[RMDB]
Chemical mapping of a 177-nucleotide RNA with 2A3 and DMS. Source: RMDB library RFMREP, as collected in RNAgym. The RNA was probed in 150 mM KOAc, 10 mM MgCl2 and 150 mM bicine (pH 8.5) at 24 C. Reactivities are given for positions 27 through 126. For 2A3, 14,678 sequencing reads were counted.
RNA sequence: GGGAACGACUCGAGUAGAGUCGAAAACUAGAGUUCGCUCUAGAAAAGACAGUCAGUAGUUGGUCUGGUGUGAGCAGGAAUUCUCAGAUCACCUCUUGGCUGUGAGAAAGCUCGAGUUCGCUCGAGCGGCAAUAUAUGUCUUCGGACAUAUAUUGCCAAAAGAAACAACAACAACAAC
Reactivity to 2A3 in 0.01 (KOAc 150mM, MgCl2 10mM, bicine 150mM(pH8.5), 24C), signal-to-noise 7, nucleotides 027 to 126: c000u000a000g010a000g010u070u090c160g040c060u000c000u000a010g050a040a140a010a020g120a010c000a000g000u000c000a000g010u020a000g010u040u010g000g010u000c000u010g030g060u160g060u080g070a070g020c120a100g110g260a110a120u180u020c070u010c010a000g010a010u000c000a000c010c010u010c010u020u030g000g000c020u000g000u010g000a070g080a050a170a010g000c000u000c010g010a010g010u060u080c140g010c060u000c000g000a000g000c020
Reactivity to DMS in 0.01 (KOAc 150mM, MgCl2 10mM, bicine 150mM(pH8.5), 24C), signal-to-noise 5, nucleotides 027 to 126: c010u000a020g000a020g010u000u020c230g010c010u000c000u000a020g000a090a090a100a160g000a040c010a010g000u000c000a000g010u000a020g010u000u000g010g000u000c000u000g000g010u010g020u000g000a080g020c150a130g000g010a110a120u000u000c020u010c000a010g000a010u000c010a010c060c010u000c020u000u000g000g010c000u000g010u010g000a110g000a080a100a190g010c000u000c000g010a010g010u000u010c270g010c000u000c000g010a010g010c020